Structure probing data (DMS) for a 177-nucleotide construct. For DMS the reverse transcriptase was MarathonRT. The DMS profile rests on 1,904 reads.
[RMDB]
RNA sequence: GGGAACGACUCGAGUAGAGUCGAAAAUCUUCUUUCCCUUCUCUCGUCUUCUUCGGUCAACCUCCGAAGUUCCUCUUCCUCUUCCCUGCUGAGGGACUUUCCCCCGGAGGAGAGCUGCCUCUUCUUGCAACGUGUGUAAGUUCGCUUACACACGUUGAAAAGAAACAACAACAACAAC
Reactivity to DMS in 0.01 (KOAc 150mM, MgCl2 10mM, bicine 150mM(pH8.5), 24C), signal-to-noise 1, nucleotides 027 to 126: u010c060u010u010c050u000u000u010c030c000c020u010u020c020u000c030u000c050g020u000c030u000u000c000u000u000c040g020g000u000c120a100a130c060c090u010c030c000g020a050a060g010u000u000c020c010u000c010u000u010c030c070u010c150u000u000c010c000c010u000g010c090u000g010a070g020g000g000a010c070u000u000u000c020c000c000c080c020g010g010a070g000g010a070g000a100g020c080u010g020c020c000u010c050u000u010c020u000u000g010